[RMDB]
RNA sequence: GGGAACGACUCGAGUAGAGUCGAAAACAAGGCCCACCUUCUAGUCGGUGUGUAAUUGCUGGACAGGGAGUUGCUUGGACCAAAAUGCCAGUAUGUGAAGGUAGGCUAGGCAACUAUGGUCUGACAGACGGUUCGGUAAUUUCGAUUACCGAACCGUAAAAGAAACAACAACAACAAC
Reactivity to DMS in 0.01 (KOAc 150mM, MgCl2 10mM, bicine 150mM(pH8.5), 24C), signal-to-noise 2, nucleotides 027 to 126: c140a090a090g000g020c010c000c090a120c080c020u000u010c030u000a120g010u010c050g030g090u010g010u010g020u010a130a060u010u000g030c060u010g000g050a080c090a160g000g020g010a050g020u000u000g020c040u000u000g040g000a180c000c030a010a040a060a150u010g010c010c000a120g000u000a130u020g000u000g010a040a060g000g010u000a020g010g000c000u000a020g020g000c010a020a040c090u000a130u000g010g010u010c020u000g000a150c130a080g010
Reactivity to 2A3 in 0.01 (KOAc 150mM, MgCl2 10mM, bicine 150mM(pH8.5), 24C), signal-to-noise 1, nucleotides 027 to 126: c020a030a000g080g000c010c010c000a000c020c010u040u050c060u050a100g060u070c050g030g010u040g000u000g030u090a050a040u080u080g040c030u110g060g010a080c010a060g000g090g030a050g060u050u060g030c040u020u020g090g020a270c000c000a110a120a040a060u070g040c010c010a020g160u180a100u190g250u080g110a130a040g100g030u030a050g010g000c030u030a070g000g000c000a020a020c020u040a100u120g010g020u050c010u000g040a000c030a000g090